[RMDB]
RNA sequence: GGGAACGACUCGAGUAGAGUCGAAAAGUAAAAGAGGAGAAAGCGCGCACUCCUCAAGCGCGCAGAUGUACGUACCACAUCAGGUACGAACGCGCCAAGGGUGGGACGCGCGAACCCACCCAAAAAAUCCUAAAAUGGUGUUCGCACCAUUUUAGGAAAAAGAAACAACAACAACAAC
Reactivity to DMS in 0.01 (KOAc 150mM, MgCl2 10mM, bicine 150mM(pH8.5), 24C), signal-to-noise 2, nucleotides 027 to 126: g010u020a110a140a110a070g000a050g010g000a100g000a040a070a070g010c020g000c070g000c130a180c000u000c000c000u000c030a030a060g030c120g000c030g040c090a060g000a070u020g030u000a140c010g020u020a000c000c010a120c180a170u020c220a130g040g000u000a020c000g000a030a030c030g060c040g020c000c150a060a070g000g020g050u000g000g000g000a060c070g020c030g030c020g000a120a180c000c000c050a030c000c000c020a000a000a050a020a040a040